Source: RMDB library TTRDEL, as collected in RNAgym.
Structure probing data (DMS and 2A3) for a 177-nucleotide construct.
For 2A3 the reverse transcriptase was SuperScript II with manganese.
For DMS, 3,180 sequencing reads were counted.
In probing experiments dimethyl sulfate is read out at A N1 and C N3, which are open when not base-paired.
[RMDB]
RNA sequence: GGGAACGACUCGAGUAGAGUCGAAAAGAUAUGGAGCCAAACAGGCGACGAUCUGGUUGUCGGAAACGACAUCCAGGGAGCCUGUGGCUCCUAAGUCAAAAUCCUAACCGGUUCGCCGGUUAGGAAAUCGUAAUUUAACCUUCGGGUUAAAUUACGAAAAAGAAACAACAACAACAAC
Reactivity to DMS in 0.01 (KOAc 150mM, MgCl2 10mM, bicine 150mM(pH8.5), 24C), signal-to-noise 2, nucleotides 027 to 126: g010a010u000a020u010g000g010a010g020c010c000a030a140a300c020a020g010g020c010g010a050c240g000a010u010c000u000g000g000u000u000g000u000c000g010g010a010a010a040c010g010a010c000a000u010c000c000a010g010g000g010a000g020c000c000u000g010u000g000g020c000u000c010c000u000a010a030g010u010c010a110a080a120a160u000c000c000u010a000a000c000c000g010g000u010u010c210g030c020c000g020g000u000u000a010g000g010a000a010a030
Reactivity to 2A3 in 0.01 (KOAc 150mM, MgCl2 10mM, bicine 150mM(pH8.5), 24C), signal-to-noise 1, nucleotides 027 to 126: g010a000u020a000u060g020g030a010g000c010c000a100a260a250c050a150g010g000c020g110a170c010g000a040u020c000u000g000g000u000u010g010u000c000g010g010a000a000a010c000g010a000c000a000u020c010c000a010g000g000g020a010g000c000c000u010g010u000g010g000c000u030c000c000u000a000a000g010u000c000a000a030a030a290u030c000c010u010a010a010c000c010g000g050u040u050c160g020c070c000g000g010u000u010a000g000g000a010a050a000
Reactivities are given for positions 27 through 126. The 2A3 profile rests on 4,569 reads.